[RMDB]
An RNA of 177 nucleotides, treated with 2A3 and DMS and read out base by base.
2A3 adducts were read by reverse transcription with SuperScript II with manganese.
Source: RMDB library M2PK50, as collected in RNAgym.
RNA sequence: GGGAACGACUCGAGUAGAGUCGAAAAUCGAUGGCGUUCGCGCCAUCGAAGAGCCGUACCGCGUAGCACGCGGAAAGGAGUGAAGAUAUCCAAGGCCAUGGAGGAGGCGUGCUUUCGAGCACGCCAAUGACCACAUACAAUUCGUUGUAUGUGGUCAAAAAGAAACAACAACAACAAC
Reactivity to 2A3 in 0.01 (KOAc 150mM, MgCl2 10mM, bicine 150mM(pH8.5), 24C), signal-to-noise 3, nucleotides 027 to 126: u030c000g000a000u000g010g020c030g000u040u030c210g010c000g000c110c020a000u010c000g000a000a000g020a020g020c010c020g030u070a060c010c020g000c010g040u020a030g120c220a030c080g000c000g010g000a080a020a020g000g010a020g000u100g130a130a090g040a140u110a070u160c020c000a010a020g040g000c000c030a030u110g060g010a070g020g090a050g020g000c000g000u010g000c000u130u070u110c240g050a020g000c000a000c000g000c000c000a000a000
Reactivity to DMS in 0.01 (KOAc 150mM, MgCl2 10mM, bicine 150mM(pH8.5), 24C), signal-to-noise 5, nucleotides 027 to 126: u000c000g010a010u000g010g010c000g030u000u020c220g010c010g010c010c010a000u010c000g000a010a050g010a130g000c020c010g010u000a230c010c000g010c010g030u000a100g040c140a300c030g010c010g010g010a030a090a140g000g010a090g010u000g000a080a050g000a100u010a090u000c010c010a050a070g010g010c030c050a100u000g000g000a060g020g020a150g000g020c000g010u000g000c000u000u010u010c140g000a020g010c000a000c000g010c000c010a020a030